[RMDB]
RNA sequence: GGGAACGACUCGAGUAGAGUCGAAAAUCACUAAACUAACCAGUCAAGAGGUGAAAAGAUGGUGGAAGAUGAUAUCUUACAUCGUGAUAAUAAGCAAUCCAUAACCACAUCCAACUUGUCAGUUAAAGCUGACGAUAUCAUUCGUGAUAUCGUCAGCAAAAGAAACAACAACAACAAC
Reactivity to 2A3 in 0.01 (KOAc 150mM, MgCl2 10mM, bicine 150mM(pH8.5), 24C), signal-to-noise 2, nucleotides 027 to 126: u040c000a020c090u050a080a050a020c010u040a030a060c010c010a030g050u030c020a030a080g060a050g110g000u030g000a000a060a050a020g140a040u060g020g030u020g050g000a030a010g020a060u120g050a030u040a070u210c010u030u050a040c040a040u020c010g020u110g060a050u050a220a040u140a050a040g030c020a050a020u080c020c040a000u040a000a040c010c020a040c030a000u060c020c020a000a060c040u040u000g040u090c020a040g050u120u090a110a040a020
Reactivity to DMS in 0.01 (KOAc 150mM, MgCl2 10mM, bicine 150mM(pH8.5), 24C), signal-to-noise 1, nucleotides 027 to 126: u030c020a130c090u000a060a110a100c080u010a150a050c110c000a080g000u040c180a070a040g000a120g000g020u000g040a050a030a050a090g040a030u020g000g050u000g010g070a070a000g020a010u000g000a100u040a300u000c000u000u000a020c010a010u000c030g030u000g030a070u000a070a100u000a020a110g020c050a080a050u000c020c000a000u000a040a040c060c050a010c020a040u030c090c000a000a160c040u000u000g000u000c020a060g000u000u020a000a040a090